Notes
Chemical mapping of a 177-nucleotide RNA with 2A3 and DMS.
RNA sequence: GGGAACGACUCGAGUAGAGUCGAAAAUCGAAGCUCACUGAAAAGCUCCUUUUCAGGGUUUGUCUUUUUUUGACCUAAAUUAGAGCUUGUUCUGUGUGAACAACCCCAUCUCCAGGGCAUCUGACGGGGUAGGAGUAAAUUUCGAUUUACUCCUACCAAAAGAAACAACAACAACAAC
Reactivity to 2A3 in 0.01 (KOAc 150mM, MgCl2 10mM, bicine 150mM(pH8.5), 24C), signal-to-noise 9, nucleotides 027 to 126: u060c010g010a020a010g040c020u020c040a080c030u030g010a000a020a010a010g050c090u150c050c080u050u030u020u040c060a050g020g030g030u050u090u130g150u080c070u060u100u050u040u010u050u120g030a030c000c000u050a100a140a180u110u100a070g010a010g060c060u020u020g060u040u000c020u020g110u030g060u060g100a060a030c030a040a080c010c000c000c010a050u030c030u010c030c020a020g010g040g000c010a050u020c060u060g050a060c060g070g020
Reactivity to DMS in 0.01 (KOAc 150mM, MgCl2 10mM, bicine 150mM(pH8.5), 24C), signal-to-noise 5, nucleotides 027 to 126: u020c070g000a060a060g010c040u010c030a080c030u010g000a020a020a020a030g010c100u030c140c040u000u010u000u010c040a040g010g000g010u000u010u010g000u010c000u000u010u010u010u000u010u000g000a040c010c020u000a040a060a090u010u010a130g010a030g000c090u000u010g020u000u000c010u000g010u030g020u010g020a070a070c160a090a090c040c000c020c020a090u010c020u020c030c030a080g010g000g000c060a040u010c020u010g000a070c150g000g010
About this RNA: Reactivities are given for positions 27 through 126. It was measured as part of the RMDB library OK1LIB.